[RMDB]
RNA sequence: GGGAACGACUCGAGUAGAGUCGAAAAAGAGGAGACGAGAAGGAGGUGGAUCUCCCUUUGCCAUCCGAGGGGAUUGCGUCCUCCUUACGGAUGCCCAGGUCGGACCGCGAGGAGGUGGAGAUCCCAUAUAGCUGCUUGUUCGCAAGCAGCAAAAGAAACAACAACAACAAC
Reactivity to 2A3 in 0.01 (KOAc 150mM, MgCl2 10mM, bicine 150mM(pH8.5), 24C), signal-to-noise 5, nucleotides 027 to 129: a000g040a020g020g000a020g000a010c020g000a010g000a070a040g010g020a020g000g020u110g040g030a040u000c040u050c050c000c000u080u090u120g040c020c020a060u040c020c000g000a060g010g020g000g000a010u000u120g080c040g060u030c000c010u010c000c000u040u070a020c000g000g000a010u090g050c040c020c010a020g040g080u090c020g030g020a040c010c010g030c010g010a040g010g000a010g000g020u060g000g030a030g010a020u020c000c020c030a020u140a030u030a080
Reactivity to DMS in 0.01 (KOAc 150mM, MgCl2 10mM, bicine 150mM(pH8.5), 24C), signal-to-noise 3, nucleotides 027 to 129: a070g030a040g000g000a080g040a060c040g000a030g040a080a110g000g000a020g060g040u050g040g020a030u020c000u000c010c020c100u000u000u000g040c010c070a060u030c030c030g020a120g030g020g020g030a030u000u000g010c040g040u030c050c000u050c040c040u000u000a060c060g000g000a030u090g020c050c030c040a110g030g000u000c120g080g000a030c030c030g050c000g040a050g050g040a050g000g000u060g010g010a120g000a010u030c000c000c000a100u070a090u030a050
Source information:
The record gives the reactivity of an RNA of 170 nucleotides to 2A3 and DMS. 2A3 adducts were read by reverse transcription with SuperScript II with manganese. Conditions: 150 mM KOAc, 10 mM MgCl2 and 150 mM bicine (pH 8.5), 24 C.